[RMDB]
This 207-nucleotide RNA was probed chemically with DMS and 2A3. High 2A3 reactivity points to a flexible backbone, as in loops and unpaired stretches. It was measured as part of the RMDB library OK3TST. For DMS, 4,605 sequencing reads were counted. The RNA was probed in 150 mM KOAc, 10 mM MgCl2 and 150 mM bicine (pH 8.5) at 24 C.

RNA sequence: GGGAACGACUCGAGUAGAGUCGAAAAGCUAGUCGGAGACGACUAGCAACGAUCAGUUCGCUGAUCGGAAGGUGCAUUCAAAUACGCUAGAAGCACCAAUAAUCGACGCGUAGCGUAAAACUGAGAAAGCAGAUAACAAAAAUAAAAAGGCGUCGCGCCCAGUAUUACUAUUCGUAGUAAUACUGGGAAAAGAAACAACAACAACAAC
Reactivity to DMS in 0.01 (KOAc 150mM, MgCl2 10mM, bicine 150mM(pH8.5), 24C), signal-to-noise 3, nucleotides 027 to 156: g010c010u000a000g010u010c010g020g010a300g010a300c030g020a030c020u000a000g020c000a010a000c010g040a020u000c000a030g020u000u000c300g020c010u000g010a020u000c000g020g000a070a100g000g030u000g000c020a190u000u010c050a040a090a250u010a050c020g000c000u000a110g000a070a080g020c000a010c000c010a080a090u010a070a100u000c020g010a030c030g040c060g040u000a050g010c030g000u000a010a070a100a180c050u010g000a200g020a120a150a130g000c040a050g010a140u000a090a200c060a030a050a060a100a150u010a070a050a060a100a160g000g020c030g030u000c010g020c150g000
Reactivity to 2A3 in 0.01 (KOAc 150mM, MgCl2 10mM, bicine 150mM(pH8.5), 24C), signal-to-noise 6, nucleotides 027 to 156: g000c000u000a000g000u000c000g020g020a060g010a090c010g000a000c010u000a000g000c000a000a010c000g000a000u010c010a000g040u070u090c160g030c100u000g000a010u010c010g010g040a080a070g000g000u000g020c100a300u020u040c000a010a040a090u050a030c030g000c020u020a020g010a060a000g010c000a010c010c000a000a010u170a030a020u060c010g000a000c000g000c010g030u060a030g000c010g010u020a020a050a080a090c040u050g010a030g100a180a100a030g130c040a010g020a060u160a180a080c070a070a110a080a040a010u170a080a110a020a020a000g080g000c010g000u000c000g000c020g030